[RMDB]
RNA sequence: GGGAACGACUCGAGUAGAGUCGAAAAGCGCCUCUUUGAGCUGACGAUAACCGUGAGGUUGGCGACGCGAAAUAGUCACGAGGCCAUCGGUUCAUGCCCGGUAAGGCGUCACCAUGCCCGCAGCUUAGCGAGGAGAGAAGUUCGCUUCUCUCCUCGCAAAAGAAACAACAACAACAAC
Reactivity to DMS in 0.01 (KOAc 150mM, MgCl2 10mM, bicine 150mM(pH8.5), 24C), signal-to-noise 2, nucleotides 027 to 126: g040c090g000c020c000u000c060u000u020u030g000a060g010c070u000g010a040c040g030a070u000a110a050c010c010g000u050g010a090g000g010u020u000g030g000c070g010a110c080g050c000g000a060a050a070u080a040g000u000c080a060c160g010a020g030g020c030c040a040u010c050g000g050u010u030c110a020u080g030c100c000c070g000g000u010a030a130g000g030c040g000u000c040a100c040c030a080u020g040c040c000c060g040c100a060g020c020u000u030a110
Reactivity to 2A3 in 0.01 (KOAc 150mM, MgCl2 10mM, bicine 150mM(pH8.5), 24C), signal-to-noise 4, nucleotides 027 to 126: g030c040g050c010c000u040c010u060u050u160g050a020g000c030u030g030a080c020g070a120u090a120a070c030c030g020u040g080a100g050g000u020u080g020g010c020g000a000c040g030c010g080a050a060a070u210a040g040u030c050a010c140g020a120g000g010c010c020a030u060c040g030g020u080u050c040a030u130g040c000c020c040g030g020u130a090a050g060g000c000g010u010c010a010c020c000a030u060g020c000c000c000g010c040a030g010c000u010u020a030